[RMDB]
RNA sequence: GGGAACGACUCGAGUAGAGUCGAAAAGGCCAGAGCAGAUACGUAGGCCCAUGAAAUUGAUGAACUGAGAGUUGCUCGCAGUCCUCAGCGCACCAUCUGGAAUUCUAGUCUGAGGUUACAAUUAGAAUCAAUUAUGCUAUUUCGAUAGCAUAAUUGAAAAAGAAACAACAACAACAAC
Reactivity to 2A3 in 0.01 (KOAc 150mM, MgCl2 10mM, bicine 150mM(pH8.5), 24C), signal-to-noise 9, nucleotides 027 to 126: g040g000c010c010a010g010a020g030c050a020g040a130u130a150c060g050u090a060g020g020c000c010c010a050u170g080a060a070a070u140u130g030a060u060g030a090a030c030u030g010a020g010a010g140u070u080g030c010u010c030g000c010a010g040u040c010c000u020c010a010g000c020g000c040a050c040c000a070u100c060u090g020g070a080a070u170u020c030u040a040g100u000c020u020g030a020g020g060u040u070a060c050a060a070u100u060a090g090a050a040
Reactivity to DMS in 0.01 (KOAc 150mM, MgCl2 10mM, bicine 150mM(pH8.5), 24C), signal-to-noise 9, nucleotides 027 to 126: g000g020c020c020a080g010a120g020c050a080g010a080u020a060c140g010u010a100g000g010c030c020c050a070u020g010a050a080a110u030u010g000a060u020g010a120a060c020u000g010a080g010a060g010u010u020g000c030u010c110g010c040a080g010u010c020c010u000c010a030g020c190g010c110a070c040c040a080u010c070u010g010g010a110a090u010u010c050u000a070g000u010c020u010g000a070g010g010u010u010a050c110a060a070u020u030a080g020a110a140

Notes: An RNA of 177 nucleotides, treated with 2A3 and DMS and read out base by base. Values cover nucleotides 27 to 126. DMS adducts were read by reverse transcription with MarathonRT. 2A3 adducts were read by reverse transcription with SuperScript II with manganese. Conditions: 150 mM KOAc, 10 mM MgCl2 and 150 mM bicine (pH 8.5), 24 C.